Description:
Conditions: 150 mM KOAc, 10 mM MgCl2 and 150 mM bicine (pH 8.5), 24 C. Structure probing data (2A3 and DMS) for a 177-nucleotide construct. For DMS, 1,036 sequencing reads were counted. DMS adducts were read by reverse transcription with MarathonRT. Values are in units of 0.01, from 0 to 300, in steps of 10.
[RMDB]
RNA sequence: GGGAACGACUCGAGUAGAGUCGAAAAGAUAUGGAUCAUGAACUACCAAACCGUUUCGGAAACGAAACGGCUUGGCAUGAGUCCUAAGUCAAACGUAGCUCUGUCAGUUCGCUGACAGAGCUACGAACCUUACCUGAGUCUUCGGACUCAGGUAAGGAAAAGAAACAACAACAACAAC
Reactivity to 2A3 in 0.01 (KOAc 150mM, MgCl2 10mM, bicine 150mM(pH8.5), 24C), signal-to-noise 1, nucleotides 027 to 126: g030a030u130a020u280g000g010a000u020c010a000u050g080a100a150c090u170a150c300c020a010a000a010c010c000g000u000u000u000c010g000g020a080a100a110c000g010a000a010a000c010g020g000c000u000u020g010g000c030a000u020g040a010g300u060c000c000u010a170a030g040u050c060a080a040a060c000g000u020a010g000c000u000c000u000g050u030c020a030g060u110u260c300g100c200u010g000a000c000a020g010a010g000c000u010a000c000g000a000a000
Reactivity to DMS in 0.01 (KOAc 150mM, MgCl2 10mM, bicine 150mM(pH8.5), 24C), signal-to-noise 2, nucleotides 027 to 126: g000a030u000a300u010g020g000a280u000c010a010u010g010a110a040c060u030a300c030c000a000a010a010c000c000g020u020u000u020c000g000g040a110a080a180c000g010a000a000a020c020g010g010c030u000u000g000g000c000a010u010g000a070g020u000c000c000u010a030a120g010u000c010a090a060a300c010g010u000a000g000c000u000c000u000g030u000c000a010g000u010u010c220g000c010u010g020a010c010a000g020a000g000c000u000a000c000g000a010a060